[RMDB]
RNA sequence: GGGAACGACUCGAGUAGAGUCGAAAAAUAUUGCACCCAGGAACUAUUUUAAGAAAUCUUGUGUCAUAACCUGUGACCAAAAGUUAAGUAGCAGUUUUCCUAAUGUGUCUGCGUUUGCUAUAAAGAAGUAAACGCAGGGAUUCGUCCCUGCGUUUACAAAAGAAACAACAACAACAAC
Reactivity to DMS in 0.01 (KOAc 150mM, MgCl2 10mM, bicine 150mM(pH8.5), 24C), signal-to-noise 1, nucleotides 027 to 126: a080u000a060u000u010g010c120a080c120c080c030a040g000g050a060a050c040u010a030u000u000u000u000a080a120g000a090a060a070u010c060u000u000g000u010g020u010c070a000u000a070a050c210c160u010g020u010g020a080c060c070a060a020a030a170g010u000u000a070a080g010u000a070g010c040a040g010u010u000u020u000c020c020u020a070a070u000g010u020g000u000c030u010g010c120g010u000u010u000g020c030u000a060u010a040a130a120g000a070a090